[RMDB]
RNA sequence: GGGAACGACUCGAGUAGAGUCGAAAAGAUAUGGAGCAUACAGAGAGGUGGGUGUUUGAAGGACGUUAUAUCGGAAACGAUAUAACGUCCUUUGAUACCCACUACCCACCUCUGGUGCUCCUAAGUCCUACGUACCAGACUUCGGUCUGGUACGUAGAAAAGAAACAACAACAACAAC
Reactivity to DMS in 0.01 (KOAc 150mM, MgCl2 10mM, bicine 150mM(pH8.5), 24C), signal-to-noise 1, nucleotides 027 to 126: g030a160u010a260u000g030g020a030g010c040a000u000a120c000a000g010a010g010a160g070g010u000g000g010g030u030g010u000u000u000g020a000a020g010g000a000c000g020u000u010a000u000a010u030c020g000g000a170a060a300c020g010a020u000a000u000a000a000c000g000u010c000c000u000u000u000g000a000u020a020c000c030c000a020c020u000a020c070c110c170a300c160c010u000c010u020g000g020u020g020c000u010c000c000u010a000a080g000u020c010

Source: RMDB library TTRINS, as collected in RNAgym. Structure probing data (DMS) for a 177-nucleotide construct. The RNA was probed in 150 mM KOAc, 10 mM MgCl2 and 150 mM bicine (pH 8.5) at 24 C.